[RMDB]
RNA sequence: GGGAACGACUCGAGUAGAGUCGAAAACACUGCUCUCUUCAAAGCUGUCAGACAGGGACACUUAAGUCUGCAGAGGUUACUGCUGUCUUUUUGUUUGUCUGUGCCCUGCCCCCAGAGGUGGAGCCUACAGAGGCAGGCAGGCCUCCUUGAGCUGUGGUGUUAUCUCCCAAUUCGUUGGGAGAUAACAAAAAGAAACAACAACAACAAC
Reactivity to DMS in 0.01 (KOAc 150mM, MgCl2 10mM, bicine 150mM(pH8.5), 24C), signal-to-noise 1, nucleotides 027 to 156: c040a100c020u000g040c020u010c000u000c030u000u020c110a090a080a120g000c060u020g030u030c040a050g000a180c100a230g010g030g030a110c060a070c080u000u020a070a040g020u000c040u000g000c060a050g010a120g040g010u000u000a100c030u000g010c000u010g010u000c010u000u020u000u010u000g020u000u000u000g030u000c010u000g010u000g060c000c000c010u000g000c010c010c000c050c300a100g000a060g010g060u000g030g000a040g010c010c010u000a060c020a060g000a060g000g010c010a050g010g040c030a030g000g010c000c010u010c060c050u010u000g020a130g040c010u000g020u000g020g030
Reactivity to 2A3 in 0.01 (KOAc 150mM, MgCl2 10mM, bicine 150mM(pH8.5), 24C), signal-to-noise 4, nucleotides 027 to 156: c020a000c010u040g000c010u010c010u010c000u200u170c120a090a070a050g050c080u080g170u220c010a020g020a110c020a040g040g080g090a050c070a010c130u140u060a150a020g030u010c040u050g010c040a030g000a010g040g010u050u150a060c000u000g000c000u000g000u000c000u000u090u020u130u090g060u060u100u080g160u080c070u080g270u070g050c010c010c000u020g000c000c010c010c020c010a010g020a030g010g000u020g000g040a000g000c000c000u000a010c010a000g000a020g020g000c000a000g000g060c000a000g010g010c010c010u030c000c020u060u060g020a010g000c030u010g030u010g020g030